[RMDB]
RNA sequence: GGGAACGACUCGAGUAGAGUCGAAAAUGCAGUACAUGUACUGGCAGGUACCUUUGUAAUGCCUGUUGAGUAACAGUUGGGUCCAUUAUGCACUGUAAACAUUAAAUGCAUGGUGCUUUAUUUUAAAAGUCAUUUCAUAAUUCGUUAUGAAAUGACUAAAAGAAACAACAACAACAAC
Reactivity to DMS in 0.01 (KOAc 150mM, MgCl2 10mM, bicine 150mM(pH8.5), 24C), signal-to-noise 8, nucleotides 027 to 126: u000g010c040a060g020u010a060c070a070u000g010u000a030c020u000g000g010c040a020g000g010u000a030c130c140u000u010u010g010u010a140a270u000g010c010c010u000g000u000u000g020a060g020u000a050a060c040a040g000u000u000g010g010g020u000c060c030a070u000u000a070u010g000c020a010c030u000g000u010a070a130a090c090a060u010u010a050a080a160u000g010c090a040u000g000g010u000g000c060u000u000u010a060u010u010u010u010a030a090a130
Reactivity to 2A3 in 0.01 (KOAc 150mM, MgCl2 10mM, bicine 150mM(pH8.5), 24C), signal-to-noise 6, nucleotides 027 to 126: u080g000c010a010g040u050a030c030a110u060g000u010a000c010u010g020g000c010a010g010g000u040a050c020c000u130u160u270g170u180a120a050u050g000c000c000u020g030u020u090g170a030g000u020a090a030c000a010g020u050u080g070g010g020u000c030c020a050u130u100a050u130g030c000a010c020u020g060u130a050a170a030c040a050u150u190a080a130a050u070g010c020a010u050g030g030u010g010c000u100u150u080a150u040u110u040u130a040a100a010
Structure probing data (DMS and 2A3) for a 177-nucleotide construct. For DMS the reverse transcriptase was MarathonRT. 2A3 adducts were read by reverse transcription with SuperScript II with manganese. Reactivities are given for positions 27 through 126. The RNA was probed in 150 mM KOAc, 10 mM MgCl2 and 150 mM bicine (pH 8.5) at 24 C.